RNA sequence: GGGAACGACUCGAGUAGAGUCGAAAAAGAUCGUCACGGGCAUCUUCCUGACGAUGAACUACAAGCCCGAUUCGACGCUCGCGUUCGCGUCGGUCGAGUACAUCAUGCGCGAGGUGCCGUGGGGCUAUCCGAUGACCACUUUCGAGUGGUCAUCGGAAAAAGAAACAACAACAACAAC
Reactivity to 2A3 in 0.01 (KOAc 150mM, MgCl2 10mM, bicine 150mM(pH8.5), 24C), signal-to-noise 1, nucleotides 027 to 126: a000g060a080u060c070g080u010c150a040c120g120g020g000c050a090u000c040u150u030c030c020u040g030a020c040g010a010u020g000a020a000c000u090a050c050a100a050g010c000c010c000g000a020u130u100c000g000a000c000g020c050u070c080g110c020g060u170u100c010g000c020g020u040c030g000g000u030c000g020a010g070u030a030c040a060u050c000a010u170g070c020g000c000g060a000g050g030u020g020c000c000g020u060g040g010g000g000c030u030a080
Reactivity to DMS in 0.01 (KOAc 150mM, MgCl2 10mM, bicine 150mM(pH8.5), 24C), signal-to-noise 2, nucleotides 027 to 126: a010g010a010u000c010g000u000c010a010c080g060g010g030c130a050u000c100u000u000c030c010u000g020a120c090g000a030u000g000a100a150c180u000a130c100a150a280g010c070c000c000g000a070u010u000c010g000a010c000g000c010u000c210g020c070g020u010u000c030g020c080g030u000c060g000g020u000c030g010a300g010u030a040c150a070u000c080a030u010g010c050g030c180g010a050g010g010u000g000c010c000g000u000g000g000g010g030c080u000a070